RNA sequence: GGGAACGACUCGAGUAGAGUCGAAAAGAUGAGACACUUUCUGUCUUGCUAUUACGCAGACCAGAGCUUAUCGGAAGAUUGGUGCUGUCAAUUUCUCUAUAGAGGCGUGUCACUUCUAUGGGGAAGGCCAGAGUCCACUAUUCGUAGUGGACUCUGGAAAAGAAACAACAACAACAAC
Reactivity to DMS in 0.01 (KOAc 150mM, MgCl2 10mM, bicine 150mM(pH8.5), 24C), signal-to-noise 1, nucleotides 027 to 126: g000a070u010g000a120g000a100c050a100c150u010u000u020c070u000g010u000c000u000u000g060c020u000a160u000u000a110c270g000c030a030g000a030c070c140a010g010a060g010c080u000u000a030u000c040g030g010a160a120g000a040u000u000g000g000u020g010c040u000g010u000c040a050a080u000u000u000c000u000c010u000a010u000a040g000a010g010g030c070g000u010g010u020c040a090c000u020u000c010u000a020u000g010g000g000g010a010a000g020g000
Reactivity to 2A3 in 0.01 (KOAc 150mM, MgCl2 10mM, bicine 150mM(pH8.5), 24C), signal-to-noise 1, nucleotides 027 to 126: g080a050u090g030a010g000a030c010a000c110u060u120u090c060u020g000u000c000u080u150g000c000u000a160u300u200a100c150g010c030a000g010a010c010c060a010g000a000g050c030u030u080a070u120c020g050g080a020a040g030a050u050u120g010g000u070g090c010u010g080u050c010a040a050u000u030u000c010u000c000u050a000u010a000g000a010g040g110c240g150u200g140u150c050a010c070u000u050c000u010a010u000g030g000g000g000a010a020g030g000
An RNA of 177 nucleotides, treated with DMS and 2A3 and read out base by base. The 2A3 profile rests on 882 reads. The DMS profile rests on 1,040 reads. DMS adducts were read by reverse transcription with MarathonRT.